Chemical mapping of a 207-nucleotide RNA with 2A3.
RNA sequence: GGGAACGACUCGAGUAGAGUCGAAAAGUCUCCGAUCAACGGCUGUGGGAGACGGCGAAGGACGCUGCAUUCGAGCGCGGCGAGGUCCUCGACGACGUCGUCACCGGUUGGCUCCGCGACUACAUCAACGCCGAACCCGCCGAGGACACACCGGCCGCAGAUAUCAGCGUUUCGACGCUGAUAUCUGAAAAGAAACAACAACAACAAC
Reactivity to 2A3 in 0.01 (KOAc 150mM, MgCl2 10mM, bicine 150mM(pH8.5), 24C), signal-to-noise 1, nucleotides 027 to 156: g080u030c020u000c080c070g030a180u130c050a160a000c040g020g020c010u020g000u230g110g100g020a160g020a040c060g020g000c000g010a080a000g000g010a000c050g000c030u010g000c000a060u160u300c140g170a050g170c060g000c030g050g000c010g050a090g140g040u010c030c010u060c070g130a210c010g000a020c000g030u010c020g020u050c000a060c050c010g000g000u000u020g010g010c000u010c000c000g000c000g120a100c020u250a080c030a130u170c080a160a050c000g020c000c040g000a010a030c000c000c000g000c050c010g030a100g000g030a030c010a000c000a010c070c040g000g000c000c030g010
The reactions ran in a buffer of 150 mM KOAc, 10 mM MgCl2 and 150 mM bicine (pH 8.5), at 24 C.